[RMDB]
RNA sequence: GGGAACGACUCGAGUAGAGUCGAAAAGAUAUGGAGCCAUCUAUACACUCGAAGAACGCUUUCGGAAACGAAAGCGGGAGAGUGAUAGAGUGGCUCCUAAGUCAAAAGGUUGUCUUCGGACAACCAAUCCAUUAGGUCUGUUCGCAGACCUAAUGGAAAAAGAAACAACAACAACAAC
Reactivity to 2A3 in 0.01 (KOAc 150mM, MgCl2 10mM, bicine 150mM(pH8.5), 24C), signal-to-noise 1, nucleotides 027 to 126: g020a030u110a040u260g020g000a000g000c010c020a020u060c030u030a020u120a210c010a020c030u050c040g160a300a020g040a060a030c010g020c060u000u000u000c000g040g030a140a030a040c010g000a000a020a000g020c000g010g020g010a010g020a000g000u000g000a000u030a000g030a000g070u010g020g000c010u000c000c000u000a000a010g020u020c000a030a060a050a150g030g000u000u000g010u010c000u070u130c300g180g000a000c000a000a000c000c010a000a000
Reactivity to DMS in 0.01 (KOAc 150mM, MgCl2 10mM, bicine 150mM(pH8.5), 24C), signal-to-noise 2, nucleotides 027 to 126: g000a090u010a300u000g010g000a000g000c000c020a070u000c010u000a050u000a240c000a010c000u010c000g000a120a190g000a150a200c000g000c020u010u000u010c010g000g000a140a170a180c000g010a000a000a000g010c000g010g000g000a070g010a030g030u000g000a060u000a010g000a090g040u000g010g010c000u000c000c000u000a020a020g000u010c040a120a090a160a100g000g020u000u000g000u000c010u000u000c300g000g010a020c000a000a000c000c000a060a020
Structure probing data (2A3 and DMS) for a 177-nucleotide construct. The DMS profile rests on 1,531 reads. Reactivities are rounded to 0.1 and cut off at 0 and 3. Reactivities are given for positions 27 through 126. For DMS the reverse transcriptase was MarathonRT.